RNA sequence: GGGAACGACUCGAGUAGAGUCGAAAAACUCCCCUCGAUAGGAGCAAGACCAUAGCGAUGGGGGGAGAUGCUAGGAGUCGGAGGAGACCGAAGCGAGGAGGAAAGCAAAGAAAGCAACGGGGCUAGCCCAUCUUAGAAACUUCGGUUUCUAAGAUGGAAAAGAAACAACAACAACAAC
Reactivity to 2A3 in 0.01 (KOAc 150mM, MgCl2 10mM, bicine 150mM(pH8.5), 24C), signal-to-noise 3, nucleotides 027 to 126: a000c010u020c010c000c020c020u030c030g170a160u140a090g040g080a070g010c040a060a020g070a100c030c020a100u100a070g050c020g080a090u170g010g010g000g000g030g000a010g000a010u080g010c000u020a030g010g050a030g020u050c020g030g010a020g050g000a070g020a030c000c040g020a030a010g040c020g010a030g020g010a010g020g000a080a010a000g010c030a070a070a040g050a050a050a010g040c010a020a030c040g000g000g000g030c020u010a020g000c000
Reactivity to DMS in 0.01 (KOAc 150mM, MgCl2 10mM, bicine 150mM(pH8.5), 24C), signal-to-noise 4, nucleotides 027 to 126: a210c050u000c010c000c010c020u000c020g010a150u000a080g010g000a130g010c080a100a080g020a170c070c070a080u010a070g010c050g010a110u010g010g000g000g000g010g010a020g010a030u010g000c060u000a060g010g010a070g010u010c050g010g010a110g000g000a090g010a100c040c040g000a080a100g000c080g010a080g010g010a070g010g010a040a040a120g000c090a060a060a090g000a060a050a090g020c040a040a080c080g000g000g000g010c130u000a070g010c180

Conditions: 150 mM KOAc, 10 mM MgCl2 and 150 mM bicine (pH 8.5), 24 C. An RNA of 177 nucleotides, treated with 2A3 and DMS and read out base by base.